Conditions: 150 mM KOAc, 10 mM MgCl2 and 150 mM bicine (pH 8.5), 24 C.
The record gives the reactivity of an RNA of 207 nucleotides to 2A3 and DMS.
For DMS, 1,903 sequencing reads were counted.
For 2A3, 1,603 sequencing reads were counted.
For 2A3 the reverse transcriptase was SuperScript II with manganese.

[RMDB]
RNA sequence: GGGAACGACUCGAGUAGAGUCGAAAAGAAGGAAGUCCGCAUCAUCAGCACGCUUGAGCCUGUCCUCGGACGUGGUGCACUCGUGGUGAUGGAGGACGUGAUCGAGCAGGACAACGUAGCAACUGAGAAGUACGAAGCGACCAAGCGUCAGACGUUCCGUUAACUAGCACUUCGGUGCUAGUUAACGAAAAGAAACAACAACAACAAC
Reactivity to 2A3 in 0.01 (KOAc 150mM, MgCl2 10mM, bicine 150mM(pH8.5), 24C), signal-to-noise 2, nucleotides 027 to 156: g140a030a020g140g030a100a000g000u000c010c030g050c060a070u090c000a000u010c000a010g150c000a000c010g020c030u050u050g040a020g040c000c020u020g000u000c030c000u090c180g080g000a010c040g180u120g000g020u080g000c020a020c040u040c010g000u020g000g200u000g020a000u030g010g000a030g050g000a000c020g010u000g000a050u050c060g030a000g030c070a050g020g030a000c000a070a000c100g020u060a010g080c040a030a030c030u050g010a020g030a030a010g030u030a000c020g040a060a010g040c000g020a010c030c000a060a000g050c020g080u070c040a000g000a030c020g100u030u040c020
Reactivity to DMS in 0.01 (KOAc 150mM, MgCl2 10mM, bicine 150mM(pH8.5), 24C), signal-to-noise 1, nucleotides 027 to 156: g000a090a070g000g030a110a090g000u020c000c010g000c140a230u010c000a050u000c010a110g040c010a030c020g040c000u000u000g010a080g000c030c010u000g010u020c000c030u000c300g000g030a020c000g000u020g180g020u010g000c040a050c070u000c050g020u000g030g000u000g010a080u030g050g000a180g000g030a030c050g000u000g040a030u010c020g000a220g020c000a240g000g010a040c030a060a070c070g020u010a140g040c010a090a130c080u000g020a070g000a040a060g020u000a020c040g030a100a050g040c000g020a090c050c030a050a170g040c050g000u000c050a080g000a150c030g040u000u000c040